[RMDB]
RNA sequence: GGGAACGACUCGAGUAGAGUCGAAAAGUUAGGUGAGGCUCCUAUGCAAACACAGGCCACUGCCCAAAAAUGUCCAAAGACGCCAAUGGGUAGGACAGGGAUUGUCGGAUUAAGGCUUUCCAUAAUGAAAACAAAGUAUGCUUCGGCAUACUUUGAAGCUCUUAUACUAGUUCGCUAGUAUAAGAGCAAAAGAAACAACAACAACAAC
Reactivity to DMS in 0.01 (KOAc 150mM, MgCl2 10mM, bicine 150mM(pH8.5), 24C), signal-to-noise 2, nucleotides 027 to 156: g030u000u000a000g020g020u000g010a070g020g000c020u000c040c020u000a070u010g010c060a110a120a120c040a090c090a080g000g020c020c030a070c030u000g000c000c000c010a020a020a100a090a080u000g010u010c010c030a050a080a160g010a060c050g010c050c050a030a210u010g000g010g040u000a040g020g010a060c040a080g010g030g010a080u000u000g000u000c020g010g010a170u000u010a100a110g000g000c040u010u000u010c010c030a080u010a100a100u000g010a070a080a110a180c010a010a030a020g010u010a010u000g010c000u000u000c300g020g010c010a000u000a000c000u000u000u000g010a030a140
Reactivity to 2A3 in 0.01 (KOAc 150mM, MgCl2 10mM, bicine 150mM(pH8.5), 24C), signal-to-noise 3, nucleotides 027 to 156: g060u050u050a040g010g040u040g060a060g010g040c030u080c050c000u070a060u140g070c050a070a090a040c030a010c010a070g070g010c030c000a030c000u000g000c000c000c000a010a020a030a000a010u020g000u040c040c050a220a030a040g020a020c010g000c010c010a000a030u020g000g000g030u020a010g000g010a020c050a010g000g060g030a040u000u050g030u030c030g010g020a060u070u110a100a050g010g000c000u030u010u000c020c020a050u110a160a090u190g140a050a040a010a050c010a010a000a010g000u000a000u000g000c010u010u060c150g050g000c010a000u000a000c000u000u000u000g000a000a010

This 207-nucleotide RNA was probed chemically with DMS and 2A3. 2A3 adducts were read by reverse transcription with SuperScript II with manganese. Conditions: 150 mM KOAc, 10 mM MgCl2 and 150 mM bicine (pH 8.5), 24 C. DMS adducts were read by reverse transcription with MarathonRT.